[RMDB]
RNA sequence: GGGAACGACUCGAGUAGAGUCGAAAAGAGGCGAAAUAAUUCCCAUCUCCUGUGUACGGCCGGAGAUGGGUCUGGCCGUACUAAUAAGCCUCAUAGUGACGAGAGUCACGAAUUCUGGAUAGCCUAUGGUAGUCGGCUAUCCUUUGACUACCGUAGAAUACUGCGUACUGUUCGCAGUACGCAGUAUAAAAGAAACAACAACAACAAC
Reactivity to 2A3 in 0.01 (KOAc 150mM, MgCl2 10mM, bicine 150mM(pH8.5), 24C), signal-to-noise 1, nucleotides 027 to 156: g000a000g020g000c050g110a060a080a030u190a010a060u230u100c000c040c020a110u080c120u020c020c050u110g010u010g030u030a000c010g000g020c000c010g060g000a050g040a080u300g080g120g050u020c000u000g010g000c000c000g000u000a000c000u000a040a000u080a020a020g000c010c010u010c020a000u120a000g020u000g000a020c050g000a020g020a040g080u010c000a000c010g010a000a090u180u000c020u000g000g060a000u100a070g020c000c000u040a020u020g060g000u020a020g040u000c010g000g050c070u150a180u220c020c000u090u070u030g000a000c000u050a050c000c040g030u040a020g060a060